[RMDB]
RNA sequence: GGGAACGACUCGAGUAGAGUCGAAAACAUAUCGUUCGUUUCACUGGGCUACUACUACUCAACGCAUUUAUUGUGCGCGGUAGACCGGUGGGCGGCAUUCAACAUUAAGUCAGCUCGAAGUCAAACACGAAUCUAUGGAGUUCGCUCCAUAGAUUCGAAAAGAAACAACAACAACAAC
Reactivity to 2A3 in 0.01 (KOAc 150mM, MgCl2 10mM, bicine 150mM(pH8.5), 24C), signal-to-noise 8, nucleotides 027 to 126: c040a030u190a040u150c110g070u180u050c020g000u040u230u300c000a000c010u000g000g000g050c020u050a010c010u020a020c010u040a060c010u060c130a080a090c000g000c010a010u040u090u100a210u150u300g010u010g000c030g000c020g010g000u010a010g010a070c000c000g000g000u000g000g010g000c000g000g000c000a000u060u160c080a050a100c050a070u050u240a130a040g070u050c030a020g010c010u030c020g030a130a010g020u010c020a070a040a060c040a010
Reactivity to DMS in 0.01 (KOAc 150mM, MgCl2 10mM, bicine 150mM(pH8.5), 24C), signal-to-noise 2, nucleotides 027 to 126: c110a110u000a080u040c140g000u020u020c000g020u000u020u030c000a020c010u020g040g010g010c010u000a000c030u000a050c070u030a060c130u020c070a250a210c000g050c030a000u000u020u040a100u080u040g020u000g000c010g040c190g040g020u010a000g000a090c040c000g000g020u000g000g000g010c010g000g010c080a040u000u020c090a130a150c080a080u010u000a080a110g000u070c020a110g000c020u010c060g000a010a120g000u040c040a080a090a100c090a140
Overview:
Source: RMDB libraries RFM100 and RFMREP, as collected in RNAgym. The record gives the reactivity of an RNA of 177 nucleotides to 2A3 and DMS. Reactivities are given for positions 27 through 126.